[RMDB]
RNA sequence: GGGAACGACUCGAGUAGAGUCGAAAAGUGUGAGUGUGUUAGGAUGACAUUGUGGCUCCAGGGAUGUGAAGAUGCAGGAGCUAUUGGGACCCCAAGCACUCCAGCAGUGACUCCAUCCUCAAAAUGGCCUCAUGCACGACUUCGGUCGUGCAUGAGGAAAAGAAACAACAACAACAAC
Reactivity to 2A3 in 0.01 (KOAc 150mM, MgCl2 10mM, bicine 150mM(pH8.5), 24C), signal-to-noise 1, nucleotides 027 to 126: g110u070g000u150g070a000g000u020g010u020g040u210u140a030g000g020a050u110g020a030c030a080u120u100g170u130g040g000c000u070c060c020a050g000g200g000a010u080g090u110g120a260a080g160a000u230g000c020a030g000g040a000g000c020u000a010u000u060g030g000g030a130c020c000c000c000a010a030g000c000a000c080u000c000c000a040g000c020a020g020u150g140a000c000u000c000c000a000u020c040c060u150c000a000a000a180a050u260g160g040